Source: RMDB libraries RFM100 and RFMREP, as collected in RNAgym. An RNA of 177 nucleotides, treated with DMS and 2A3 and read out base by base. 2A3 adducts were read by reverse transcription with SuperScript II with manganese. 2A3 is a SHAPE reagent: it acylates the 2'-hydroxyl of flexible nucleotides of all four kinds. The reactions ran in a buffer of 150 mM KOAc, 10 mM MgCl2 and 150 mM bicine (pH 8.5), at 24 C.
RNA sequence: GGGAACGACUCGAGUAGAGUCGAAAAGGUGCGACGUCUGCAAAGUUUAAUCGGAACAUUUACCAGCGAUGUGAUGGCAUCGUUACGAAGAUCACAAGGGACCUGGCCGUGACUUUUGCCCAAGGAGUGAACGUCAAUCUUUCGAGAUUGACGUUCAAAAAGAAACAACAACAACAAC
Reactivity to DMS in 0.01 (KOAc 150mM, MgCl2 10mM, bicine 150mM(pH8.5), 24C), signal-to-noise 3, nucleotides 027 to 126: g020g010u000g010c040g010a050c080g020u030c010u020g010c080a080a100a100g010u000u020u000a100a130u020c080g000g000a070a090c080a070u000u000u010a110c140c040a120g000c030g010a100u000g020u030g000a090u020g010g000c020a020u010c030g000u000u000a060c120g010a110a070g000a070u010c020a050c060a090a170g020g000g010a070c110c020u010g010g010c050c020g020u000g000a050c020u000u000u000u000g000c000c010c000a070a110g010g020a090g000
Reactivity to 2A3 in 0.01 (KOAc 150mM, MgCl2 10mM, bicine 150mM(pH8.5), 24C), signal-to-noise 3, nucleotides 027 to 126: g100g020u070g040c040g000a010c000g050u030c000u030g000c020a050a060a040g030u050u130u200a070a040u120c040g040g020a050a070c020a060u040u070u070a070c040c020a010g000c020g030a040u030g020u040g090a150u150g090g000c000a010u010c010g000u000u050a040c050g040a110a020g030a030u080c010a000c040a070a000g060g000g050a040c000c010u010g020g000c000c000g020u010g000a040c010u060u040u070u080g030c000c000c000a000a030g140g010a080g060